[RMDB]
RNA sequence: GGGAACGACUCGAGUAGAGUCGAAAAUACGGAAACCAUCCGUACUGACCUGUACUAUCCUAUGGGCAUGCGAAAGGAUGGUUACGUACGGAAACCAUCCUAUACACAGGUCAGCUCGGGCAUGCGAAAGGAUGGUACGUUGAGGACUACCCAUCCGAAUUCCCGAUAGAUUCGUCUAUCGGGAAUUAAAAGAAACAACAACAACAAC
Reactivity to DMS in 0.01 (KOAc 150mM, MgCl2 10mM, bicine 150mM(pH8.5), 24C), signal-to-noise 2, nucleotides 027 to 156: u000a070c020g010g000a120a060a130c030c080a060u000c000c010g000u000a020c000u000g000a070c010c000u010g000u000a070c050u010a050u010c050c020u000a130u000g010g020g010c010a040u000g060c060g000a090a180a050g020g030a020u000g010g040u000u000a040c020g010u000a180c140g050g010a120a030a030c020c010a010u010c000c000u000a150u010a100c120a030c000a020g000g010u000c040a060g000c070u010c040g020g000g040c000a040u000g040c000g010a180a150a040g000g000a040u000g000g000u010a060c030g000u000u000g020a110g000g010a140c030u000a090c090c020c030a250u000c020c010g000
Reactivity to 2A3 in 0.01 (KOAc 150mM, MgCl2 10mM, bicine 150mM(pH8.5), 24C), signal-to-noise 3, nucleotides 027 to 156: u140a020c010g020g000a130a080a010c050c010a060u030c000c000g030u020a050c000u020g010a020c000c000u010g030u070a070c040u090a080u140c030c020u120a220u170g050g070g000c010a000u000g010c020g120a210a070a050g000g000a000u000g000g000u020u010a020c040g050u060a100c090g100g050a060a010a000c000c010a000u000c000c000u070a070u030a090c140a010c020a010g000g030u040c020a000g000c040u040c030g000g050g020c010a010u010g000c030g090a140a060a040g020g010a000u020g020g000u010a020c020g000u020u050g090a110g020g000a010c000u040a020c030c000c000a000u020c010c000g000
The record gives the reactivity of an RNA of 207 nucleotides to DMS and 2A3. Values cover nucleotides 27 to 156. For 2A3, 3,254 sequencing reads were counted. The RNA was probed in 150 mM KOAc, 10 mM MgCl2 and 150 mM bicine (pH 8.5) at 24 C. As a SHAPE reagent, 2A3 marks flexible, mostly unpaired nucleotides at the ribose 2'-OH.